[RMDB]
RNA sequence: GGGAACGACUCGAGUAGAGUCGAAAAGGUCGAUAUCGACGGGUCCGAAAAAAAUAACAGUGACGGCUGUGUUCGGUGGAAGAUCGAGCCCGCUGUAUACGAUGUCCGUGAAGCUGGCGGUGAUCGGCCGGUGCAAUCGAUUCGUCGAUUGCACCGGAAAAGAAACAACAACAACAAC
Reactivity to DMS in 0.01 (KOAc 150mM, MgCl2 10mM, bicine 150mM(pH8.5), 24C), signal-to-noise 1, nucleotides 027 to 126: g030g000u000c020g010a120u000a010u000c040g010a060c000g000g000g020u000c000c010g010a000a000a060a130a040a020a160u010a050a090c180a070g000u000g000a130c190g000g000c040u030g050u040g000u030u000c070g000g040u000g030g000a060a110g030a000u000c020g000a120g000c020c010c260g050c020u000g040u050a080u110a070c000g000a030u140g000u010c090c000g000u010g000a110a060g000c000u000g040g000c000g000g020u000g000a030u010c040g000g010
Reactivity to 2A3 in 0.01 (KOAc 150mM, MgCl2 10mM, bicine 150mM(pH8.5), 24C), signal-to-noise 2, nucleotides 027 to 126: g040g000u010c000g000a060u010a010u190c000g010a070c020g000g000g020u020c000c000g070a180a000a000a000a000a000a110u300a100a000c050a010g010u000g080a010c000g090g000c020u010g080u010g040u140u020c020g000g100u120g050g130a220a090g010a080u030c030g000a000g070c010c010c010g000c000u030g010u010a110u020a100c010g040a100u090g020u100c050c030g010u030g090a000a000g080c030u050g010g010c060g000g040u120g030a040u020c000g000g010

The record gives the reactivity of an RNA of 177 nucleotides to DMS and 2A3. For DMS the reverse transcriptase was MarathonRT. 2A3 is a SHAPE reagent: it acylates the 2'-hydroxyl of flexible nucleotides of all four kinds.